An RNA of 177 nucleotides, treated with 2A3 and DMS and read out base by base.
For 2A3 the reverse transcriptase was SuperScript II with manganese.
The reactions ran in a buffer of 150 mM KOAc, 10 mM MgCl2 and 150 mM bicine (pH 8.5), at 24 C.
For DMS the reverse transcriptase was MarathonRT.
It was measured as part of the RMDB library OK1LIB.

RNA sequence: GGGAACGACUCGAGUAGAGUCGAAAAGUUCGCCUCGUCGAACGACUGCGGGACCAGCUAACUACUUCGACCUGACCCGCACGGUGGUGCGCGCGUCGAUCGUCGCCAGCUGACACGCCGAAGGUGCACAGGCCGUGGAUUUCGAUCCACGGCCUGUAAAAGAAACAACAACAACAAC
Reactivity to 2A3 in 0.01 (KOAc 150mM, MgCl2 10mM, bicine 150mM(pH8.5), 24C), signal-to-noise 2, nucleotides 027 to 126: g020u000u050c030g100c040c060u050c000g180u030c000g000a060a090c000g040a000c020u090g010c030g000g000g050a100c030c080a010g120c070u090a060a090c000u120a040c180u180u080c040g050a070c100c000u010g020a030c060c060c050g000c000a000c000g000g010u190g020g050u010g000c080g000c010g010c000g110u030c040g040a160u120c030g000u000c030g170c030c050a040g000c070u120g000a110c000a010c000g040c010c020g130a130a060g130g010u040g000c070
Reactivity to DMS in 0.01 (KOAc 150mM, MgCl2 10mM, bicine 150mM(pH8.5), 24C), signal-to-noise 1, nucleotides 027 to 126: g000u000u000c000g000c020c180u100c090g000u000c000g000a080a120c000g000a090c090u000g000c130g000g000g000a090c100c000a020g000c020u000a100a120c120u020a050c010u000u000c050g020a070c110c110u010g000a120c010c000c000g000c000a070c120g000g000u000g000g050u010g080c140g040c160g000c020g030u000c090g000a110u000c080g120u000c050g020c150c200a280g000c000u030g000a170c000a000c010g000c030c040g000a180a050g000g000u000g000c070